RNA sequence: GGGAACGACUCGAGUAGAGUCGAAAAAGCAUUAUGCGGCCCAGCACAUUAAAACGCUGGCUCAACGUUUGGACCGAACUUGGAAGGACUUUGCCGCGGGCUUGGACGAGAGAACAGCUGUCCUGCACGACUAUAAAGGGUUCGCCCUUUAUAGUCGAAAAGAAACAACAACAACAAC
Reactivity to 2A3 in 0.01 (KOAc 150mM, MgCl2 10mM, bicine 150mM(pH8.5), 24C), signal-to-noise 3, nucleotides 027 to 126: a000g030c030a030u080u100a060u300g010c000g030g000c000c000c000a010g030c020a020c010a040u220u270a080a110a070a060c100g000c000u030g010g010c020u030c040a050a080c040g010u030u070u060g030g060a040c020c020g030a100a110c080u080u070g050g030a060a050g080g030a050c030u040u090u120g030c000c000g020c000g000g030g000c000u040u090g020g000a010c030g030a020g010a010g000a170a020c010a060g040c020u030g000u030c000c000u020g020c090a060
Reactivity to DMS in 0.01 (KOAc 150mM, MgCl2 10mM, bicine 150mM(pH8.5), 24C), signal-to-noise 4, nucleotides 027 to 126: a080g020c050a130u000u010a070u000g030c030g030g010c050c020c010a060g000c030a050c150a100u020u020a060a100a100a120c170g000c010u000g020g000c070u000c060a100a090c110g000u000u010u000g000g000a090c060c040g000a070a060c140u010u020g010g010a130a120g000g010a090c130u010u010u000g010c030c020g000c060g000g010g000c040u010u000g030g000a090c040g000a190g000a080g000a050a110c080a050g000c030u000g010u000c020c020u000g010c150a220

Structure probing data (2A3 and DMS) for a 177-nucleotide construct. For 2A3, 3,358 sequencing reads were counted. The data come from the RNA Mapping Database (RMDB), library OK2TST. The RNA was probed in 150 mM KOAc, 10 mM MgCl2 and 150 mM bicine (pH 8.5) at 24 C. DMS adducts were read by reverse transcription with MarathonRT.